[RMDB]
An RNA of 177 nucleotides, treated with 2A3 and DMS and read out base by base. DMS adducts were read by reverse transcription with MarathonRT. It was measured as part of the RMDB libraries RFM100 and RFMREP. The reactions ran in a buffer of 150 mM KOAc, 10 mM MgCl2 and 150 mM bicine (pH 8.5), at 24 C. 2A3 adducts were read by reverse transcription with SuperScript II with manganese.
RNA sequence: GGGAACGACUCGAGUAGAGUCGAAAAAAUAGAGCACGAGAUAAUGUGCUUACAGAAAGUUGGUUGAAUUGAAUGCAAUUAAUGUUUGGAGGCACUUAGUCUUCUAGUGUUUGAAUGUGGAUGGAAUCGUCAAACGAAAAUUCGUUUUCGUUUGACGAAAAGAAACAACAACAACAAC
Reactivity to 2A3 in 0.01 (KOAc 150mM, MgCl2 10mM, bicine 150mM(pH8.5), 24C), signal-to-noise 1, nucleotides 027 to 126: a000a000u160a010g000a010g000c030a080c000g040a040g000a170u080a130a020u080g000u000g010c000u000u000a000c040a000g210a160a100a000g060u030u030g050g020u000u000g020a070a020u080u090g010a050a040u060g000c000a000a000u130u050a040a050u200g090u100u070u060g020g000a020g010g010c000a000c000u000u120a000g000u000c050u090u000c000u000a000g000u000g040u090u150u040g140a110a020u130g000u000g130g000a130u110g060g060a050a030u050
Reactivity to DMS in 0.01 (KOAc 150mM, MgCl2 10mM, bicine 150mM(pH8.5), 24C), signal-to-noise 1, nucleotides 027 to 126: a060a070u050a140g010a020g020c000a070c060g000a050g010a080u020a110a060u010g000u000g000c000u000u000a070c090a030g010a050a060a100g020u000u000g000g020u000u000g000a030a080u000u020g000a100a050u000g000c020a040a050u000u010a000a020u040g020u000u000u000g000g000a040g000g000c010a030c070u000u000a270g000u000c000u010u000c300u010a050g010u020g000u000u000u000g040a060a050u000g030u010g010g030a090u000g000g000a050a090u000